[RMDB]
RNA sequence: GGGAACGACUCGAGUAGAGUCGAAAAGGUUCGGUGAUGAAUUCUCACGUGCAGGUACCUCUUCAGUAGAAAAAUUCAAUAAGGUUUCUGACACUUUCUACCUAUGGGCCAGUUACAUACAGAAGAGAAAACUGAAACUGAAAACUGGUUUGUCAUAUAAUACGUAUGAUUUCGAUCAUACGUAUUAAAAAGAAACAACAACAACAAC
Reactivity to DMS in 0.01 (KOAc 150mM, MgCl2 10mM, bicine 150mM(pH8.5), 24C), signal-to-noise 2, nucleotides 027 to 156: g010g010u010u000c080g040g020u030g020a090u000g010a080a170u010u000c040u000c000a000c100g030u000g010c020a090g000g000u010a060c050c000u000c040u010u010c070a080g040u000a090g000a050a090a080a120a120u020u000c040a070a190u000a110a180g000g000u000u000u000c050u010g020a180c060a040c080u000u000u000c030u010a090c050c040u020a060u010g000g000g010c000c040a070g000u010u000a070c030a140u000a150c010a090g000a120a030g010a190g000a100a080a090a120c060u010g000a060a070a120c030u010g010a020a020a070a090c040u000g000g000u000u000u010g010u000c020a040u000a100
Reactivity to 2A3 in 0.01 (KOAc 150mM, MgCl2 10mM, bicine 150mM(pH8.5), 24C), signal-to-noise 3, nucleotides 027 to 156: g110g000u080u070c080g010g070u110g070a110u060g020a090a220u160u030c060u030c010a050c060g020u040g000c010a020g040g020u070a100c000c030u040c040u120u060c070a050g020u110a060g100a050a100a050a130a170u190u150c060a070a080u150a180a030g010g000u030u100u030c050u100g040a020c020a010c020u090u070u020c030u070a050c000c000u050a110u090g010g030g000c000c010a010g000u020u050a040c020a030u090a030c020a030g050a140a040g060a090g040a040a120a000a010c020u010g010a070a030a010c030u020g050a060a100a000a040c000u010g000g000u050u080u080g050u010c020a020u050a000

This 207-nucleotide RNA was probed chemically with DMS and 2A3. The RNA was probed in 150 mM KOAc, 10 mM MgCl2 and 150 mM bicine (pH 8.5) at 24 C. For DMS the reverse transcriptase was MarathonRT.